[RMDB]
Chemical mapping of a 207-nucleotide RNA with DMS and 2A3. The reactions ran in a buffer of 150 mM KOAc, 10 mM MgCl2 and 150 mM bicine (pH 8.5), at 24 C. For 2A3, 4,262 sequencing reads were counted. It was measured as part of the RMDB library OK3TST.
RNA sequence: GGGAACGACUCGAGUAGAGUCGAAAACGAGAUCUCGGCAAGAUCCACAAAGCUGCCAGCGCGGGUAAUGUGGCGAAAGUGCAGCAGAUCCUUUUGCUCAGGAAGAAUGGCUUGAACGAUAGAGACAAGAUGAACAGGUAAUAGGCGUCGCAAGCCACACCUAUUUAUGGUUCGCCAUAAAUAGGUGAAAAGAAACAACAACAACAAC
Reactivity to DMS in 0.01 (KOAc 150mM, MgCl2 10mM, bicine 150mM(pH8.5), 24C), signal-to-noise 3, nucleotides 027 to 156: c080g030a150g010a030u000c000u000c020g050g040c070a280a230g000a080u010c000c010a100c050a060a030a150g010c020u010g010c020c010a170g020c090g030c090g030g010g020u000a060a130u010g010u010g010g050c040g000a070a090a110g040u000g010c020a070g020c020a090g000a080u010c010c000u000u010u000u000g030c040u020c040a110g000g010a090a100g010a120a130u000g010g030c020u010u000g010a030a080c030g000a090u000a070g010a170g030a140c020a070a090g010a080u010g020a070a070c060a120g010g000u000a060a080u000a080g020g020c020g020u010c060g030c030a020a070g030c020c010a110
Reactivity to 2A3 in 0.01 (KOAc 150mM, MgCl2 10mM, bicine 150mM(pH8.5), 24C), signal-to-noise 6, nucleotides 027 to 156: c070g020a030g010a180u030c010u040c060g030g030c040a040a000g010a060u030c010c010a030c040a020a150a010g000c020u040g010c030c030a060g050c020g000c030g000g060g050u170a150a120u160g060u110g100g010c010g040a140a090a010g110u170g030c000a020g030c000a010g020a070u050c010c010u040u090u100u080g020c020u040c070a030g080g060a050a040g080a090a070u050g010g000c000u030u020g020a110a060c020g030a040u060a110g060a010g030a040c030a070a040g060a140u170g030a050a040c060a080g000g060u050a090a040u070a150g080g040c010g010u030c020g000c060a020a010g010c000c000a010